[RMDB]
RNA sequence: GGGAACGACUCGAGUAGAGUCGAAAAUCGAUGGGCAGGCCCAUGCGCUUGGCGACGUAGCCUGCGAAAAUAUCGCCGAAAUUGCCGGUGGGCACCGUGAAGGACACGGCGCGGUCCGGUGCGCCGACUCCUCAGUAAUGUUCGCAUUACUGAGGAGAAAAGAAACAACAACAACAAC
Reactivity to DMS in 0.01 (KOAc 150mM, MgCl2 10mM, bicine 150mM(pH8.5), 24C), signal-to-noise 7, nucleotides 027 to 126: u010c070g000a070u000g000g000g010c020a030g000g020c010c070c060a090u000g010c030g010c070u000u010g000g030c010g000a050c060g010u000a120g000c000c000u010g000c030g000a040a050a080a080u000a300u000c010g010c010c010g000a050a080a150u010u010g010c040c020g000g010u000g010g000g020c010a030c010c020g010u000g000a170a130g010g020a160c040a040c020g010g010c020g030c020g010g010u000c020c030g010g010u000g010c040g020c010c040g000a240
Reactivity to 2A3 in 0.01 (KOAc 150mM, MgCl2 10mM, bicine 150mM(pH8.5), 24C), signal-to-noise 6, nucleotides 027 to 126: u080c010g010a020u030g000g010g000c010a010g030g000c010c020c020a030u100g010c020g010c040u070u130g020g000c010g010a030c030g040u050a010g010c000c010u010g010c010g050a040a020a010a040u130a020u030c000g000c010c010g030a070a070a060u240u220g040c060c010g030g010u090g040g210g010c020a010c010c000g040u080g070a140a080g140g040a030c020a000c050g010g000c000g000c010g020g050u020c020c020g020g000u040g020c010g010c010c010g040a080
The data come from the RNA Mapping Database (RMDB), library OK2TST. Chemical mapping of a 177-nucleotide RNA with DMS and 2A3. The DMS profile rests on 13,836 reads. The 2A3 profile rests on 14,390 reads.